RNA sequence: GGGAACGACUCGAGUAGAGUCGAAAACGCGUCAGAUUCGUCUGACGCGAAAGCAUAGAACAGCGCUAUCAUGUAUUAUAGUUGUAUGCAACUAUAGCGCUAAAACGAUACCGUUCGCGGUAUCGAACGGGAUAUUAUCCUUCGGGAUAAUAUCCCGAAAAGAAACAACAACAACAAC
Reactivity to DMS in 0.01 (KOAc 150mM, MgCl2 10mM, bicine 150mM(pH8.5), 24C), signal-to-noise 2, nucleotides 027 to 126: c010g050c010g010u000c000a000g020a010u000u010c240g020u000c010u010g020a000c000g030c000g000a000a020a090g030c190a080u000a060g010a100a090c220a020g000c020g000c000u020a060u010c250a200u010g000u000a060u020u010a060u000a060g010u010u000g010u000a120u000g000c000a000a060c050u000a010u000a020g020c030g030c010u000a040a040a080a100c010g000a010u000a000c000c000g020u000u000c170g020c000g000g000u000a010u000c010g010a020a110
Reactivity to 2A3 in 0.01 (KOAc 150mM, MgCl2 10mM, bicine 150mM(pH8.5), 24C), signal-to-noise 4, nucleotides 027 to 126: c000g000c010g000u000c000a010g000a060u020u130c140g040u010c080u010g000a000c000g000c000g010a000a000a000g000c030a070u090a160g100a140a060c040a090g000c010g020c010u020a010u080c070a140u170g160u210a140u240u130a050u100a080g120u050u110g070u110a140u110g110c000a000a030c020u020a010u010a010g000c010g000c050u060a000a020a000a050c030g000a000u010a010c000c010g010u020u030c210g010c000g090g000u000a000u000c000g010a070a010